[RMDB]
RNA sequence: GGGAACGACUCGAGUAGAGUCGAAAAGGUAGUGACGCUCACCGGGCCAUCACCGCCGUGAUAGUCGUUUUCACCCAUAUCGCGAGUCUCGGCCUUGCGGUAGUAGGGCAGGCAGUCGAGGUAGCUCAGGCUAAAACAAAUUCGUUUGUUUUAGCCUAAAAGAAACAACAACAACAAC
Reactivity to 2A3 in 0.01 (KOAc 150mM, MgCl2 10mM, bicine 150mM(pH8.5), 24C), signal-to-noise 4, nucleotides 027 to 126: g020g010u050a020g020u030g030a020c040g010c010u010c040a130c070c080g040g020g000c010c010a070u060c030a010c020c020g010c020c040g010u010g050a130u100a080g010u030c020g010u030u000u050u080c060a080c020c000c010a040u030a020u050c020g000c000g020a020g070u020c010u020c050g050g010c000c000u000u040g020c020g050g010u020a060g070u070a060g020g050g050c060a050g050g050c030a010g020u030c010g020a010g020g050u070a020g020c030u050c060
Reactivity to DMS in 0.01 (KOAc 150mM, MgCl2 10mM, bicine 150mM(pH8.5), 24C), signal-to-noise 7, nucleotides 027 to 126: g000g000u000a050g020u000g010a060c300g010c030u000c040a180c080c070g010g000g010c050c060a120u010c050a060c040c050g000c050c030g010u000g010a070u010a020g010u000c010g000u000u000u010u010c040a300c020c010c020a110u000a020u000c030g010c010g000a040g010u010c030u000c050g000g000c050c010u000u010g010c020g010g010u000a030g010u010a080g010g000g020c080a070g010g000c110a040g000u010c030g010a040g000g010u010a080g020c120u010c150
Chemical mapping of a 177-nucleotide RNA with 2A3 and DMS. The 2A3 profile rests on 10,418 reads. The data come from the RNA Mapping Database (RMDB), library OK2TST.